[RMDB]
Conditions: 150 mM KOAc, 10 mM MgCl2 and 150 mM bicine (pH 8.5), 24 C.
This 177-nucleotide RNA was probed chemically with 2A3.

RNA sequence: GGGAACGACUCGAGUAGAGUCGAAAAAAAAUCUUUCCGUCUUAGACAAUUCUUUCCAAGUAUUUCUUUUGUGUUUUUUAACCUAUAAAAGAUAAUGGAAUGUUUUAUAGACUGGAUUUUAUCUCAUCAAUGUACUCGUAUUCGUACGAGUACAUUGAAAAGAAACAACAACAACAAC
Reactivity to 2A3 in 0.01 (KOAc 150mM, MgCl2 10mM, bicine 150mM(pH8.5), 24C), signal-to-noise 5, nucleotides 027 to 126: a010a010a000a020u010c020u050u050u040c050c030g010u000c010u030u070a070g030a060c040a040a120u100u050c020u060u050u030c020c010a110a080g080u060a230u030u090u030c020u010u030u030u030g070u030g070u030u040u020u010u110u270a050a050c020c000u100a040u080a170a020a010a000g010a020u030a090a030u060g000g010a020a010u030g010u000u030u010u040a090u020a020g000a000c030u070g010g000a000u000u000u020u050a050u010c010u000c010a050u010

Source: RMDB library RFM100, as collected in RNAgym.